[RMDB]
RNA sequence: GGGAACGACUCGAGUAGAGUCGAAAAUCCUUUCUCGAUAGAGAUUGGAGUCAUACAACCCCAGAAACCAUUCCUUAUACCUUGAGUUUUGCUGAAUUCAGUUUAGCGUGCAUGCUCUUGGCUAUUCAUACCAAGGACAACUUCGGUUGUCCUUGAACUCUUAGCAAGAGUUCGCUCUUGCUAAGAGAAAAGAAACAACAACAACAAC
Reactivity to DMS in 0.01 (KOAc 150mM, MgCl2 10mM, bicine 150mM(pH8.5), 24C), signal-to-noise 3, nucleotides 027 to 156: u000c000c000u000u000u000c010u000c010g000a300u010a120g030a000g010a020u000u000g010g030a020g020u000c100a140u000a120c080a130a240c020c010c010c040a080g000a160a090a120c070c030a160u000u000c020c010u000u000a190u000a040c010c000u000u020g000a050g030u010u000u010u000g040c000u020g000a070a070u000u000c140a140g000u000u000u000a050g010c040g040u000g000c060a070u000g000c010u000c000u000u000g050g030c050u000a090u000u000c080a090u010a160c140c020a030a010g010g020a010c000a010a030c000u010u000c300g080g010u010u000g010u000c000c000u000u000g030a020a130
Reactivity to 2A3 in 0.01 (KOAc 150mM, MgCl2 10mM, bicine 150mM(pH8.5), 24C), signal-to-noise 6, nucleotides 027 to 156: u000c000c000u000u000u010c050u010c010g190a270u170a300g000a000g000a000u000u010g000g010a010g040u070c030a060u110a180c060a050a170c020c030c000c000a020g130a110a100a040c080c030a130u110u140c040c030u170u150a040u030a170c000c010u010u020g020a010g020u100u110u170u190g020c010u040g040a100a130u140u150c050a100g130u070u070u140a060g060c050g030u040g020c020a010u050g000c000u000c000u020u020g010g000c020u090a060u070u130c060a040u050a210c060c010a000a000g000g000a000c000a000a010c010u030u080c140g070g010u000u000g000u000c000c000u000u000g000a000a000
Structure probing data (DMS and 2A3) for a 207-nucleotide construct. The reactions ran in a buffer of 150 mM KOAc, 10 mM MgCl2 and 150 mM bicine (pH 8.5), at 24 C. It was measured as part of the RMDB library M2RFPK. For 2A3, 4,535 sequencing reads were counted.